[RMDB]
RNA sequence: GGGAACGACUCGAGUAGAGUCGAAAACAGUGAAAAAAAAGAGGACAUAGGCCUGAAUCCAAUGGACUUGUCUUCUAGAACACACCAUGCCACCUGAGACAAGUCAGCCAAUCUUUCUAAGCAUAAACAUCCUUAACUGCACAGGGAGGAGAUUGCAGUAAAUGAUCAGUUUCGACUGAUCAUUUACAAAAGAAACAACAACAACAAC
Reactivity to 2A3 in 0.01 (KOAc 150mM, MgCl2 10mM, bicine 150mM(pH8.5), 24C), signal-to-noise 3, nucleotides 027 to 156: c030a020g040u060g130a110a000a010a010a010a000a020a050g020a010g010g010a010c030a030u180a050g040g020c020c010u040g040a080a080u090c070c070a090a100u120g020g010a000c000u000u010g000u000c000u020u000c020u040a030g060a060a010c060a000c010a020c050c040a040u110g020c010c010a050c000c030u030g000a020g010a050c040a060a030g030u060c040a010g020c030c010a030a070u040c030u020u130u000c030u080a050a060g000c020a040u060a080a120a050c030a050u050c010c000u070u090a130a090c040u060g010c050a030c040a070g010g030g010a010g010g010a020g010a010u040u110g020c030a010
Reactivity to DMS in 0.01 (KOAc 150mM, MgCl2 10mM, bicine 150mM(pH8.5), 24C), signal-to-noise 2, nucleotides 027 to 156: c040a160g020u020g000a030a000a000a040a060a070a140a080g000a020g010g020a040c020a050u010a040g040g000c030c010u000g000a130a110u020c140c070a090a130u010g010g010a010c010u010u010g010u000c000u000u000c030u010a080g000a120a100c060a060c060a100c060c070a170u000g000c010c020a080c100c030u050g000a120g030a090c040a060a080g010u000c090a100g030c020c030a070a090u000c030u000u010u010c030u010a060a150g020c030a040u010a050a080a050c060a130u000c010c010u000u000a050a070c070u000g000c060a060c060a050g030g030g010a070g000g000a080g020a120u000u000g020c020a180